[RMDB]
RNA sequence: GGGAACGACUCGAGUAGAGUCGAAAAAUCUGAUAUAUCAUUUGUAUCAUUUGUGCUCCUUAUUAAAAUUAUAAUAGUCCUUUGGACCUUAUCGCAAAUGUCACUAUUAAAGUCAAUAUCCUCACAGCCUAUACCGUGAGUUCGCUCACGGUAUAGGAAAAGAAACAACAACAACAAC
Reactivity to 2A3 in 0.01 (KOAc 150mM, MgCl2 10mM, bicine 150mM(pH8.5), 24C), signal-to-noise 7, nucleotides 027 to 126: a000u050c040u030g010a000u010a000u030a020u110c090a140u120u140u220g030u010a030u020c010a030u010u010u060g050u060g070c040u070c040c020u040u110a080u110u200a090a130a100a050u230u190a110u050a170a100u090a040g040u060c020c010u060u080u150g030g010a030c020c020u060u160a100u110c020g000c060a020a030a080u050g080u080c030a020c090u050a040u170u140a120a040a010g010u020c040a030a070u020a090u090c000c030u040c000a040c020a020g010
Reactivity to DMS in 0.01 (KOAc 150mM, MgCl2 10mM, bicine 150mM(pH8.5), 24C), signal-to-noise 1, nucleotides 027 to 126: a050u000c010u000g000a070u010a000u000a010u010c150a180u060u000u000g000u020a020u000c060a000u000u000u000g000u020g000c020u000c000c070u000u020a090u060u000a060a130a020a010u010u050a010u050a080a060u020a070g000u000c130c020u000u020u010g000g020a030c110c030u000u000a020u000c050g000c030a090a010a010u000g000u040c110a060c110u000a070u000u000a040a060a030g000u020c040a020a050u020a010u020c010c000u000c030a000c200a280g000